[RMDB]
RNA sequence: GGGAACGACUCGAGUAGAGUCGAAAAGAUAUGGAUCCCAGUUGGGAGCGAUCCAUCGGAAACGAUGGAAUCGCGAAGAACAACGGGAUCCUAAGUCAAAGUGUGAACGUGUUCGCACGUUCACACACACAACUGCGAUGUUCGCAUCGCAGUUGUGAAAAGAAACAACAACAACAAC
Reactivity to 2A3 in 0.01 (KOAc 150mM, MgCl2 10mM, bicine 150mM(pH8.5), 24C), signal-to-noise 1, nucleotides 027 to 126: g000a010u020a010u040g010g000a000u020c000c020c040a030g010u020u000g120g050g050a240g000c020g010a010u010c010c000a000u000c010g010g020a030a000a010c010g000a000u000g030g030a090a070u050c000g000c020g030a040a040g050a020a000c000a020a000c020g000g000g010a010u000c000c000u000a010a000g000u000c080a190a110a060g010u000g000u010g000a010a010c000g010u010g020u140u180c300g000c130a010c000g000u000u020c000a000c000a000c000a010
Reactivity to DMS in 0.01 (KOAc 150mM, MgCl2 10mM, bicine 150mM(pH8.5), 24C), signal-to-noise 2, nucleotides 027 to 126: g000a030u000a050u010g000g000a000u000c000c000c010a170g060u000u020g000g020g000a070g010c010g030a010u000c000c000a000u010c000g020g000a000a000a010c000g030a000u000g000g000a030a030u000c010g030c000g060a070a080g000a300a300c010a010a010c030g010g010g000a000u000c000c020u000a000a080g000u000c030a110a100a160g010u000g030u000g000a000a010c020g020u010g030u000u030c290g070c000a030c000g030u000u000c000a000c000a010c000a070